Source: RMDB library OK2TRN, as collected in RNAgym. Chemical mapping of a 177-nucleotide RNA with DMS and 2A3. For DMS the reverse transcriptase was MarathonRT.

[RMDB]
RNA sequence: GGGAACGACUCGAGUAGAGUCGAAAACGCAGCCGCAAGUUUUGUUAAAGCCUCCGCAGCAUCACUAUAAACACUACCAGACUGACCGAUGCUAUAAGUCAUGCUCUUCAGUUGGCUAGCGGUGACAGAUUACCACUCUCUUCGGAGAGUGGUAAUCAAAAGAAACAACAACAACAAC
Reactivity to DMS in 0.01 (KOAc 150mM, MgCl2 10mM, bicine 150mM(pH8.5), 24C), signal-to-noise 2, nucleotides 027 to 126: c090g030c130a170g000c000c040g010c050a130a070g000u000u000u010u000g000u000u010a110a110a130g000c010c030u000c060c080g000c070a090g000c000a020u000c080a090c090u000a100u020a060a100a010c050a050c130u000a100c060c030a060g000a080c040u000g000a050c100c040g010a040u000g030c050u000a080u000a100a120g020u000c070a060u000g000c020u000c050u010u000c110a060g010u020u000g010g000c070u000a080g020c040g010g000u010g000a070c170a060
Reactivity to 2A3 in 0.01 (KOAc 150mM, MgCl2 10mM, bicine 150mM(pH8.5), 24C), signal-to-noise 1, nucleotides 027 to 126: c030g020c000a010g030c080c030g030c050a110a040g040u080u110u170u180g060u080u180a130a060a000g010c000c010u070c000c050g000c020a020g030c000a040u080c020a000c030u100a050u100a200a080a000c030a000c040u080a020c060c000a050g070a170c040u030g030a030c000c130g030a090u140g040c010u050a030u030a270a020g050u040c000a010u050g000c050u010c030u120u100c010a010g000u040u010g080g000c020u030a010g000c050g000g000u020g010a020c050a010
For 2A3 the reverse transcriptase was SuperScript II with manganese.